[RMDB]
RNA sequence: GGGAACGACUCGAGUAGAGUCGAAAACGAACUUUCGAGUUCGAAAAACCGUAGGUUGGAGACAGCGGACCCGAAGAACACGGAUUCGAAAGAGUCCGUGGGAGGGUCCGAACUACUGUCCAAUCAACCUAAACGGAAAAAGUACGUUCGCGUACAAGAUAGAUGAUAUCUUCGGAUAUCAUCUAUCAAAAGAAACAACAACAACAAC
Reactivity to 2A3 in 0.01 (KOAc 150mM, MgCl2 10mM, bicine 150mM(pH8.5), 24C), signal-to-noise 3, nucleotides 027 to 156: c010g010a010a000c010u100u110u210c250g060a020g020u030u000c010g060a140a010a000a040a030c010c000g000u010a000g000g020u000u010g040g020a090g000a020c010a000g010c000g000g000a000c000c000c030g100a210a030g020a040a000c000a000c000g000g010a010u000u000c010g050a140a080a090g000a040g020u000c000c000g000u010g000g000g010a010g000g000g020u000c000c000g000a000a000c000u090a020c000u000g000u000c020c000a010a050u130c000a010a000c000c000u040a140a080a010c020g010g020a030a140a030a030a000g010u000a010c010g010u020u090c260g000c010g090u010a010c000a010a020
Reactivity to DMS in 0.01 (KOAc 150mM, MgCl2 10mM, bicine 150mM(pH8.5), 24C), signal-to-noise 1, nucleotides 027 to 156: c050g000a000a060c010u000u000u000c230g010a040g060u000u010c000g010a040a180a110a140a300c000c010g060u000a040g060g050u010u010g010g060a190g000a040c040a020g020c030g020g020a050c000c000c000g010a130a150g000a110a290c040a040c030g010g000a020u000u010c010g000a250a190a300g000a030g020u000c020c020g030u000g000g000g010a210g000g000g080u000c010c000g000a010a100c030u020a070c010u000g010u010c020c040a080a170u000c010a050a000c000c000u000a000a050a150c020g050g020a020a090a090a070a130g030u000a000c000g020u010u000c250g000c030g010u020a000c020a160a300